The record gives the reactivity of an RNA of 170 nucleotides to 2A3 and DMS. It was measured as part of the RMDB library 15KLIB. The reactions ran in a buffer of 150 mM KOAc, 10 mM MgCl2 and 150 mM bicine (pH 8.5), at 24 C. The 2A3 profile rests on 81,957 reads.
RNA sequence: GGGAACGACUCGAGUAGAGUCGAAAACCCACCCACUGGGGUCCGACGUCCCACCCUUUCUUACCUUUUGGCCGGCAUGGUCCCAGCCUCCUCGCUGGCGCCGGCUGGGCAACAUUCCGAGGGGACCACACAUGUCUGUUCGCAGACAUGAAAAGAAACAACAACAACAAC
Reactivity to 2A3 in 0.01 (KOAc 150mM, MgCl2 10mM, bicine 150mM(pH8.5), 24C), signal-to-noise 9, nucleotides 027 to 129: c000c000c000a040c000c010c000a090c090u120g020g010g010g030u020c020c030g070a080c050g060u040c000c010c000a070c020c010c010u050u160u080c040u080u150a150c040c000u080u090u060u150g090g020c000c000g000g010c040a100u160g050g030u110c030c010c000a010g020c000c010u090c020c010u060c060g020c030u040g020g010c030g010c010c000g020g010c010u010g000g000g010c010a070a030c010a140u140u060c040c020g010a030g010g010g000g010a010c020c010a050c000a000
Reactivity to DMS in 0.01 (KOAc 150mM, MgCl2 10mM, bicine 150mM(pH8.5), 24C), signal-to-noise 9, nucleotides 027 to 129: c030c000c010a140c040c040c030a070c080u020g010g000g010g000u000c040c040g020a140c120g020u030c010c000c000a170c060c030c020u020u050u040c070u040u020a110c100c050u010u030u030u040g000g000c010c010g040g000c030a060u000g000g040u040c230c000c000a050g030c020c060u010c070c060u010c120g020c040u000g030g030c180g000c010c010g020g000c010u000g000g000g000c030a070a070c140a100u030u020c030c020g000a070g020g020g000g000a030c040c050a060c140a120